[RMDB]
RNA sequence: GGGAACGACUCGAGUAGAGUCGAAAACAGCGCGAUCUCGCGUGUUGCCCGAAAGGGAAUCGGGUUAAGAUUUCCCGAGCCGGGACGUGGCGGUUGACGGCGACGUUAGGAAGUCCGGAGACGCCGGUUGGUGCUCUCAAUUCGUUGAGAGCACCAAAAAAGAAACAACAACAACAAC
Reactivity to 2A3 in 0.01 (KOAc 150mM, MgCl2 10mM, bicine 150mM(pH8.5), 24C), signal-to-noise 2, nucleotides 027 to 126: c060a000g020c060g000c000g060a290u040c090u110c110g020c030g020u040g100u090u130g070c000c000c020g030a050a060a000g040g000g030a070a100u010c010g140g030g000u100u220a050a030g020a140u080u000u040c010c000c000g000a040g010c030c020g000g020g040a010c050g000u080g070g010c020g080g000u050u090g030a040c010g000g000c000g030a060c030g070u170u030a090g080g010a150a000g040u000c000c000g010g020a020g000a020c020g000c060c000g000g010
Reactivity to DMS in 0.01 (KOAc 150mM, MgCl2 10mM, bicine 150mM(pH8.5), 24C), signal-to-noise 3, nucleotides 027 to 126: c050a120g030c040g000c000g010a240u010c180u030c040g010c020g000u020g000u020u000g000c010c000c000g000a050a180a170g000g030g000a030a070u020c010g000g020g020u000u040a090a100g000a030u020u030u010c000c010c000g020a220g000c170c010g000g020g000a110c040g010u030g000g020c000g010g000u010u000g010a300c020g010g000c050g010a250c110g010u030u050a100g000g010a150a180g000u040c250c000g020g000a210g010a070c070g000c000c000g010g050

This 177-nucleotide RNA was probed chemically with 2A3 and DMS. DMS adducts were read by reverse transcription with MarathonRT.